Source: RMDB library OK3TST, as collected in RNAgym. This 207-nucleotide RNA was probed chemically with 2A3. The RNA was probed in 150 mM KOAc, 10 mM MgCl2 and 150 mM bicine (pH 8.5) at 24 C. The 2A3 profile rests on 641 reads.
[RMDB]
RNA sequence: GGGAACGACUCGAGUAGAGUCGAAAAGAAUGGGUCAUGGUACGACUGUACGAGUGUUUGAACACCGUGAGGAGAAAAAGGAAACUGAAGAUCAUCGACCUACGGAUGCACGAAGUACCUCUCGUAGAGGGAGAUUCUGUGCGCGACGGUACGGCCAGUAAGCGAAAGCGUUCGCGCUUUCGCUUACAAAAGAAACAACAACAACAAC
Reactivity to 2A3 in 0.01 (KOAc 150mM, MgCl2 10mM, bicine 150mM(pH8.5), 24C), signal-to-noise 2, nucleotides 027 to 156: g130a050a020u170g010g000g020u110c060a080u020g000g000u010a050c010g040a010c060u080g050u090a060c050g080a120g020u020g090u020u170u300g060a060a000c020a010c060c000g060u080g030a080g000g090a050g060a080a040a050a000a010g080g040a120a100a000c060u110g060a090a100g050a230u110c070a010u080c020g020a160c000c000u010a020c010g080g020a040u220g000c000a000c010g000a010a000g000u060a050c060c010u020c000u040c050g070u110a130g030a070g140g070g000a030g000a000u040u090c020u110g050u010g000c010g030c060g000a050c010g010g030u040a000c000g030g000c000c000a040